[RMDB]
RNA sequence: GGGAACGACUCGAGUAGAGUCGAAAAGUUUCUUGAUGGUUCUCCUGCUCUUCCGGAGCUUUCUUUCGAGGUCUUCCGCGUCUUUUCUUGCUUGGAUCCAUUUCUCGAGGACGUCCUCCCUUCCUCCACCGUUCGCGGUUCGCCGCGAACAAAAGAAACAACAACAACAAC
Reactivity to 2A3 in 0.01 (KOAc 150mM, MgCl2 10mM, bicine 150mM(pH8.5), 24C), signal-to-noise 4, nucleotides 027 to 129: g010u010u000u010c020u030u060g000a070u150g070g020u070u050c010u000c010c030u050g090c030u000c020u100u050c010c020g100g000a000g000c000u070u080u000c020u040u090u050c020g030a030g030g000u000c010u040u010c000c010g080c050g070u050c040u010u070u010u040c040u050u050g060c010u010u060g110g000a060u040c030c000a080u040u110u040c030u010c020g020a020g010g030a100c020g010u060c000c010u030c000c000c000u070u020c000c000u000c000c000a040c000c040
Reactivity to DMS in 0.01 (KOAc 150mM, MgCl2 10mM, bicine 150mM(pH8.5), 24C), signal-to-noise 2, nucleotides 027 to 129: g000u000u010u040c020u000u000g020a230u050g020g060u000u030c080u000c030c070u000g010c030u030c050u050u060c070c090g010g020a110g050c070u040u030u010c050u000u000u000c000g050a100g000g060u040c120u020u000c050c050g040c080g030u050c130u030u080u040u000c020u000u000g040c050u050u010g040g030a220u020c050c100a130u000u000u000c000u020c050g010a110g000g020a100c090g050u000c020c020u030c000c000c000u040u040c040c010u020c010c010a000c080c050